Notes
Chemical mapping of a 177-nucleotide RNA with 2A3. For 2A3 the reverse transcriptase was SuperScript II with manganese. The 2A3 profile rests on 486 reads.
RNA sequence: GGGAACGACUCGAGUAGAGUCGAAAAAGAGUCCUCCGGCCCCUGAAUGCGGCUAAUCUCAACCACGGAGCAGGUAGUCACAAACCAGUGAUUUGCCUGUCGUAACGCGAAAGUCUGUGGCGGAACCGAGGGGCUGACAGUUCGCUGUCAGCCCCUCAAAAGAAACAACAACAACAAC
Reactivity to 2A3 in 0.01 (KOAc 150mM, MgCl2 10mM, bicine 150mM(pH8.5), 24C), signal-to-noise 1, nucleotides 027 to 126: a020g080a010g050u040c000c000u020c090c000g010g010c000c000c000c000u000g230a150a140u120g040c100g020g000c010u020a000a000u080c000u000c050a010a000c000c080a000c000g020g000a020g000c000a000g010g000u020a000g000u000c000a000c030a060a180a240c090c070a020g000u000g040a000u100u220u300g000c000c000u000g010u000c000g050u050a090a000c040g000c000g080a030a010a070g000u010c000u000g040u050g000g030c000g020g000a060a000c020c020